[RMDB]
RNA sequence: GGGAACGACUCGAGUAGAGUCGAAAAAUUCAUUCUGUCGAAGGUCUGGCGCUAUCAAGGAAUGUUAUUAUUGGGUGUAAGACGUGGUGAAAUCGGGUCAAAAAGAUAGCUCAGAACUAUUGCGUCGAAUUUAGCAUCUAUUCGUAGAUGCUAAAUUAAAAGAAACAACAACAACAAC
Reactivity to 2A3 in 0.01 (KOAc 150mM, MgCl2 10mM, bicine 150mM(pH8.5), 24C), signal-to-noise 6, nucleotides 027 to 126: a000u080u080c020a020u080u000c030u110g110u110c040g030a050a020g030g010u000c020u030g040g000c040g000c040u010a030u060c030a030a040g070g030a130a050u080g070u120u070a110u120u040a090u090u140g070g030g000u080g020u040a070a030g050a030c120g160u040g010g020u080g070a040a050a030u080c030g020g000g050u030c020a010a040a020a050a070g030a020u030a010g000c010u010c020a020g010a050a020c020u080a100u180u140g040c010g030u050c020g050
Reactivity to DMS in 0.01 (KOAc 150mM, MgCl2 10mM, bicine 150mM(pH8.5), 24C), signal-to-noise 9, nucleotides 027 to 126: a100u010u000c050a100u010u010c040u000g020u010c080g020a090a210g000g010u000c020u000g010g010c160g010c020u000a040u000c020a110a120g010g010a070a050u010g000u000u000a060u010u010a090u010u010g010g010g020u000g010u000a070a080g010a050c070g020u000g000g010u000g000a040a070a080u010c060g000g000g010u010c070a050a060a060a100a100g000a040u000a030g010c010u000c060a050g000a040a060c050u000a070u000u000g010c070g010u000c070g010
Annotation:
An RNA of 177 nucleotides, treated with 2A3 and DMS and read out base by base. DMS adducts were read by reverse transcription with MarathonRT. The RNA was probed in 150 mM KOAc, 10 mM MgCl2 and 150 mM bicine (pH 8.5) at 24 C. For 2A3, 11,363 sequencing reads were counted. Source: RMDB library OK2TST, as collected in RNAgym.